[RMDB]
RNA sequence: GGGAACGACUCGAGUAGAGUCGAAAAGCCAUGAGUUUCGACUCAUGGCAAAAGCGCGUCAGCGCUACGAUGCAAGCGCAAGCGCGUCCAUCGUAAAUCACAAAAUUCUCGGGUUCGCCCGAGAAAAUGUAACUUAACUCUUCGGAGUUAAGUUACAAAAAGAAACAACAACAACAAC
Reactivity to DMS in 0.01 (KOAc 150mM, MgCl2 10mM, bicine 150mM(pH8.5), 24C), signal-to-noise 2, nucleotides 027 to 126: g010c000c010a010u000g020a020g040u000u000u010c160g020a060c000u000c000a010u000g000g020c020a020a000a050a090g030c020g010c000g010u000c210a300g010c000g000c000u000a020c060g000a060u000g010c130a160a120g020c000g000c030a080a180g020c050g010c050g020u000c130c010a080u010c120g000u010a050a100a100u020c080a090c150a100a050a110a120u000u000c000u000c000g010g010g020u000u000c230g020c010c000c010g010a010g000a000a020a070a050
Reactivity to 2A3 in 0.01 (KOAc 150mM, MgCl2 10mM, bicine 150mM(pH8.5), 24C), signal-to-noise 2, nucleotides 027 to 126: g040c030c010a000u010g010a000g000u070u080u210c200g040a020c010u000c000a000u010g010g000c000a000a050a000a000g000c010g000c010g090u190c110a060g020c000g020c000u000a000c010g100a070u120g090c090a030a040g000c000g010c020a100a060g050c040g000c010g060u000c000c000a060u040c020g070u080a020a080a130u130c040a080c100a110a070a050a140u050u010c010u000c000g020g000g000u030u020c220g030c040c000c000g000a000g000a000a010a000a000